Chemical mapping of a 177-nucleotide RNA with DMS and 2A3.
RNA sequence: GGGAACGACUCGAGUAGAGUCGAAAAGAUAUGGACCGGUAGAUGAGCGAGGAUCUUGCUCGGAAACGAGCAAGGGAGCUCGCUACACGGUCCUAAGUCAAAGCUAGGACAGUUCGCUGUCCUAGCACAUAUUGAUAUUCUUCGGAAUAUCAAUAUGAAAAGAAACAACAACAACAAC
Reactivity to DMS in 0.01 (KOAc 150mM, MgCl2 10mM, bicine 150mM(pH8.5), 24C), signal-to-noise 9, nucleotides 027 to 126: g000a060u000a300u010g000g010a000c000c010g010g010u000a010g000a090u020g010a010g010c000g010a070g020g010a050u010c000u000u000g000c000u000c000g000g000a090a090a230c000g010a010g010c000a010a010g000g000g000a040g020c000u000c010g010c000u000a000c000a130c000g020g000u000c000c000u000a000a080g010u000c060a110a140a140g010c000u000a000g000g000a020c000a000g010u000u010c300g020c000u000g010u000c000c000u000a000g010c010a050
Reactivity to 2A3 in 0.01 (KOAc 150mM, MgCl2 10mM, bicine 150mM(pH8.5), 24C), signal-to-noise 9, nucleotides 027 to 126: g030a010u080a040u160g000g000a000c000c010g000g020u010a010g050a300u260g040a010g010c020g050a300g070g010a000u000c000u000u000g000c000u000c000g000g010a060a080a010c010g000a000g000c000a000a000g000g000g000a000g010c000u010c020g000c000u000a000c160a080c010g010g000u000c000c000u000a020a000g000u000c040a080a060a040g000c000u010a000g000g000a000c000a020g010u070u150c300g090c190u000g000u000c000c000u000a000g000c000a000
Values cover nucleotides 27 to 126.
The reactions ran in a buffer of 150 mM KOAc, 10 mM MgCl2 and 150 mM bicine (pH 8.5), at 24 C.
It was measured as part of the RMDB library TTRDES.
2A3 adducts were read by reverse transcription with SuperScript II with manganese.